[RMDB]
RNA sequence: GGGAACGACUCGAGUAGAGUCGAAAAAUGGUAGUUAGUCUACUUGCUAUCCUAGUUACUUUGGAGUAAUCUAAAGUGUGUGUAAACGGGCGAAAGUCUGUAAAAUACUGGGGACAUAGGGUCAACAAGAACUAGUAGACCUUCGGGUCUACUAGAACAAGUAGGAGAGAUUCGUCUCUCCUACUUGAAAAGAAACAACAACAACAAC
Reactivity to DMS in 0.01 (KOAc 150mM, MgCl2 10mM, bicine 150mM(pH8.5), 24C), signal-to-noise 3, nucleotides 027 to 156: a120u000g010g020u000a030g020u000u000a160g010u000c010u000a050c040u010u000g010c040u000a080u000c000c000u010a070g040u000u000a030c010u000u010u000g020g020a040g000u000a140a210u000c010u000a030a010a030g030u000g020u000g020u010g020u000a060a200a090c030g050g000g010c000g000a160a100a150g010u000c020u000g000u000a030a050a090a090u000a040c030u000g040g010g020g010a080c040a100u000a060g010g020g030u010c040a050a080c060a070a070g010a090a180c010u000a010g020u000a010g010a020c000c000u000u020c300g050g030g020u000c000u000a010c000u000a000g000a040a150
Reactivity to 2A3 in 0.01 (KOAc 150mM, MgCl2 10mM, bicine 150mM(pH8.5), 24C), signal-to-noise 3, nucleotides 027 to 156: a000u070g020g020u010a020g020u090u060a050g060u060c030u050a070c010u090u030g030c000u030a060u140c010c000u020a030g020u050u050a020c000u020u000u020g000g020a030g030u140a150a110u010c010u010a020a010a000g020u020g010u010g010u000g020u070a080a110a090c020g020g010g010c020g040a070a010a030g010u000c010u000g050u040a070a020a030a020u130a030c030u030g000g000g010g010a010c040a040u100a020g030g040g010u060c010a010a020c020a120a080g030a040a040c000u000a000g000u000a010g010a000c000c000u020u030c160g040g000g000u000c000u000a000c010u000a000g000a000a010
The record gives the reactivity of an RNA of 207 nucleotides to DMS and 2A3. Reactivities are given for positions 27 through 156. Conditions: 150 mM KOAc, 10 mM MgCl2 and 150 mM bicine (pH 8.5), 24 C.